Structure probing data (DMS and 2A3) for a 177-nucleotide construct.
The reactions ran in a buffer of 150 mM KOAc, 10 mM MgCl2 and 150 mM bicine (pH 8.5), at 24 C.
DMS adducts were read by reverse transcription with MarathonRT.
The data come from the RNA Mapping Database (RMDB), library OK2TST.
Values cover nucleotides 27 to 126.

RNA sequence: GGGAACGACUCGAGUAGAGUCGAAAACGUACCGCAACGACGCGGCGAUCGUGUUUCGCCGCCUGAUCCGCUCCCUGCCGACGCGGCGGGCGGUGAUCGGCGUAGCGACCUGCGAUAAAGGGCUGCACAUCCAGGUAUAUUUCGAUAUACCUGGAUGAAAAGAAACAACAACAACAAC
Reactivity to DMS in 0.01 (KOAc 150mM, MgCl2 10mM, bicine 150mM(pH8.5), 24C), signal-to-noise 9, nucleotides 027 to 126: c130g010u000a180c030c020g010c080a070a090c110g010a110c120g020c020g010g010c030g010a050u000c040g020u000g010u000u010u000c010g020c010c000g000c030c030u000g000a100u000c010c010g000c010u000c040c110c030u000g030c040c050g030a130c240g000c020g020g010c210g000g000g010c010g000g010u000g000a120u000c100g000g000c010g010u000a070g010c000g000a040c090c030u000g000c020g010a060u010a030a080a130g000g010g010c030u000g010c060a300
Reactivity to 2A3 in 0.01 (KOAc 150mM, MgCl2 10mM, bicine 150mM(pH8.5), 24C), signal-to-noise 5, nucleotides 027 to 126: c040g040u040a060c010c020g020c080a060a070c070g200a040c090g010c000g010g020c020g020a030u020c010g000u030g060u060u060u020c010g000c010c000g000c000c010u040g000a020u020c010c000g000c020u040c040c020c030u080g050c060c070g100a160c130g010c010g070g000c010g000g010g000c000g000g010u010g010a020u040c020g020g000c020g020u040a020g000c000g020a040c000c010u020g000c000g000a000u100a060a160a020g080g080g000c030u040g000c030a020